[RMDB]
RNA sequence: GGGAACGACUCGAGUAGAGUCGAAAAGAAAGAAAGAUAGCUUGAUGGGGAUGGCAUUGAAUCUAUAAAUUACCUUGGGCAGUAUGGCCAUUUUCACGAUAUUGAUUCUUCCUACACAUGAGCAUAAGCGUAAAUGCGACUUCGGUCGCAUUUACGCAAAAGAAACAACAACAACAAC
Reactivity to 2A3 in 0.01 (KOAc 150mM, MgCl2 10mM, bicine 150mM(pH8.5), 24C), signal-to-noise 1, nucleotides 027 to 126: g000a000a150a020g300a020a120a000g100a000u180a140g060c100u160u000g020a200u020g140g000g000g060a060u080g000g030c010a000u000u300g080a140a000u070c000u060a000u120a250a200a000u190u300a000c000c000u000u000g000g080g000c000a020g140u060a120u000g150g130c000c000a000u240u000u000u000c100a080c120g000a000u000a000u240u060g080a130u160u000c000u000u110c000c000u040a040c020a000c000a040u190g090a000g100c000a000u000a300a000